[RMDB]
Structure probing data (2A3) for a 177-nucleotide construct. The 2A3 profile rests on 271 reads. Source: RMDB library OK1LIB, as collected in RNAgym. 2A3 adducts were read by reverse transcription with SuperScript II with manganese.

RNA sequence: GGGAACGACUCGAGUAGAGUCGAAAAGAAUUCUUCUGCUACAUUAAAACUAAAUACUGGUGCCUCCAUUCCAGUGUUGGGUUUCGGCACUUGGCGUUCCGUUGACAAUAACGGUUACCAUUAAAUAAUCAGCGAUGGAGUUCGCUCCAUCGCUGAUAAAAGAAACAACAACAACAAC
Reactivity to 2A3 in 0.01 (KOAc 150mM, MgCl2 10mM, bicine 150mM(pH8.5), 24C), signal-to-noise 1, nucleotides 027 to 126: g060a000a060u070u000c000u010u000c000u000g010c060u200a240c000a010u220u090a230a180a000a000c110u000a090a010a010u300a000c060u010g000g090u030g000c000c090u010c060c060a040u140u000c000c000a000g000u010g000u000u000g000g000g000u000u130u000c010g000g080c000a000c130u000u090g060g000c100g210u150u110c000c000g000u000u000g060a040c110a090a200u130a110a010c000g030g010u100u300a000c000c010a000u000u300a040a130a020u270a100